Record summary:
The record gives the reactivity of an RNA of 177 nucleotides to 2A3 and DMS. Reactivities are given for positions 27 through 126. 2A3 adducts were read by reverse transcription with SuperScript II with manganese. For 2A3, 2,527 sequencing reads were counted. The data come from the RNA Mapping Database (RMDB), library TTRDEL.

RNA sequence: GGGAACGACUCGAGUAGAGUCGAAAAGAUAUGGAUUGUUGAGGCUAGCUGCUUCGGAAACGAAUUAGCUUGGACCCUCACCAAUCCUAAGUCAAAACUUGGUGAAACCUUCGGGUUUCACCAAGAACGAGAAAUGCAUGUUCGCAUGCAUUUCUCGAAAAGAAACAACAACAACAAC
Reactivity to 2A3 in 0.01 (KOAc 150mM, MgCl2 10mM, bicine 150mM(pH8.5), 24C), signal-to-noise 1, nucleotides 027 to 126: g020a000u030a020u030g020g010a000u000u000g020u010u010g000a020g040g080c150u120a000g000c000u020g000c000u000u000c010g000g020a000a000a020c000g000a010a020u020u000a010g000c010u030u020g200g160a300c030c000c000u000c000a000c000c000a000a000u010c000c000u000a040a000g000u010c050a010a020a120a190c000u000u000g000g000u010g000a010a000a000c020c000u050u100c300g100g000g000u000u000u030c010a000c010c000a010a000g010a020a000
Reactivity to DMS in 0.01 (KOAc 150mM, MgCl2 10mM, bicine 150mM(pH8.5), 24C), signal-to-noise 1, nucleotides 027 to 126: g000a000u010a050u010g000g010a010u000u000g000u000u000g000a040g040g020c060u000a010g010c010u010g010c180u010u020c000g020g000a020a010a020c010g020a020a010u000u000a010g040c000u000u010g030g000a180c250c000c000u000c020a000c050c010a000a010u000c000c000u000a000a060g000u020c010a110a050a100a160c000u000u000g000g020u000g000a010a010a000c000c000u020u020c160g000g020g010u000u000u000c010a000c010c000a000a000g000a030a080